[RMDB]
RNA sequence: GGGAACGACUCGAGUAGAGUCGAAAAGAUAUGGAGUAGGUUGAAGUGCUUGGACCUCGGAAACGAGCUAGCACCAACUACUCCUAAGUCAAACCUCACAGUCAAUCUUCGGAUUGACUGUGAGGAACAGAAAUCACAUGUUCGCAUGUGAUUUCUGAAAAGAAACAACAACAACAAC
Reactivity to DMS in 0.01 (KOAc 150mM, MgCl2 10mM, bicine 150mM(pH8.5), 24C), signal-to-noise 3, nucleotides 027 to 126: g000a050u000a300u000g000g010a030g010u000a000g000g030u010u000g000a160a170g000u000g000c000u000u010g060g000a100c300c000u000c000g000g000a090a080a140c000g010a010g010c040u000a020g000c000a000c010c010a030a020c000u000a020c000u000c000c000u000a000a070g010u020c030a080a070a150c000c000u000c000a010c000a030g020u010c000a000a000u010c000u000u010c200g040g000a000u020u000g010a000c000u000g010u000g000a020g000g000a030a040
Reactivity to 2A3 in 0.01 (KOAc 150mM, MgCl2 10mM, bicine 150mM(pH8.5), 24C), signal-to-noise 3, nucleotides 027 to 126: g040a020u080a060u140g000g010a000g010u050a040g110g300u090u050g110a300a130g010u020g010c000u090u110g110g170a280c050c010u000c000g040g020a030a090a010c010g020a010g030c010u000a000g000c000a010c000c000a010a010c000u010a000c000u000c000c000u000a080a020g020u000c030a080a010a150c010c000u010c000a010c000a000g000u030c000a000a000u000c010u070u130c300g130g010a000u000u000g010a000c010u010g010u000g000a000g000g000a010a000

Chemical mapping of a 177-nucleotide RNA with DMS and 2A3. The 2A3 profile rests on 5,869 reads. For DMS, 2,306 sequencing reads were counted. The data come from the RNA Mapping Database (RMDB), library TTRDEL.